Chemical mapping of a 207-nucleotide RNA with 2A3.
It was measured as part of the RMDB library ARCHII.
The RNA was probed in 150 mM KOAc, 10 mM MgCl2 and 150 mM bicine (pH 8.5) at 24 C.
RNA sequence: GGGAACGACUCGAGUAGAGUCGAAAAGGGAGGUUGGUGGUGGACGAGCCACUCGCCAACCGGGUCAGGUCCGGAAGGAAGCAGCCCUAACGAGCCACGGCACGGGUCAUCGUGCCAGCCUCCCACCCUUUCUAAAACAUUGAUCUUCGGAUCAAUGCCAAUCUCUAGAGUUCGCUCUAGAGAUUGGAAAAGAAACAACAACAACAAC
Reactivity to 2A3 in 0.01 (KOAc 150mM, MgCl2 10mM, bicine 150mM(pH8.5), 24C), signal-to-noise 2, nucleotides 027 to 156: g010g000g010a020g020g010u010u010g030g030u140g020g000u000g010g030a020c020g000a000g010c010c030a020c010u020c000g030c030c050a080a140c140c100g000g000g000u040c010a010g000g020u000c010c010g040g180a100a070g050g000a020a010g000c030a010g010c000c010c020u010a020a000c020g010a020g020c070c090a120c120g000g000c010a000c040g030g000g180u030c010a010u020c020g030u150g030c000c010a010g000c000c010u000c000c000c000a030c000c000c010u000u050u000c050u050a040a040a010a010c010a000u000u000g000a000u000c000u020u050c250g080g000a000u000c010a000a000u000g000